RNA sequence: GGGAACGACUCGAGUAGAGUCGAAAAGAUCAGGGCGAGGCUGGCGUUGAACGGACACAAGCCGCUGCCGCCGAUCAAGGUCAUCGACACGCUGCUGCUGAAUCGUACAGCCUUUGGCUUCACGAGUCAGAAGUUGCAGUACGUCAGCGACAGAUUCGUUCUAUGAACGAUUCGUCGUUCAUAGAACAAAAGAAACAACAACAACAAC
Reactivity to 2A3 in 0.01 (KOAc 150mM, MgCl2 10mM, bicine 150mM(pH8.5), 24C), signal-to-noise 7, nucleotides 027 to 156: g030a020u040c070a060g060g010g060c020g040a030g050g000c120u170g040g000c070g090u040u050g070a130a090c110g110g130a010c040a010c020a100a050g030c040c050g050c250u080g060c070c010g000c010c000g000a010u040c040a040a060g060g000u050c040a050u120c110g020a020c020a010c130g010c000u010g000c000u030g000c000u000g010a040a030u090c010g010u020a020c060a030g000c000c000u090u070u180g010g000c000u050u060c120a040c080g020a000g000u000c010a010g030a130a020g070u140u140g000c010a010g000u020a010c040g000u000c010a010g040c020g050a010c010a030g050a070u150u170c090
Reactivity to DMS in 0.01 (KOAc 150mM, MgCl2 10mM, bicine 150mM(pH8.5), 24C), signal-to-noise 3, nucleotides 027 to 156: g010a070u000c020a070g000g000g000c010g010a140g010g050c010u010g040g090c020g030u010u010g010a110a160c150g000g000a080c020a060c080a040a050g010c010c000g000c040u000g040c010c000g020c030c020g000a020u010c020a130a130g010g000u020c020a090u010c030g000a050c050a120c110g020c010u000g030c000u000g000c000u000g000a030a050u010c020g000u010a070c090a040g010c010c010u010u000u000g030g010c000u000u000c120a100c110g010a090g000u000c010a020g000a020a060g020u010u000g010c040a070g000u000a060c060g010u000c000a050g010c030g010a030c010a090g000a190u010u000c080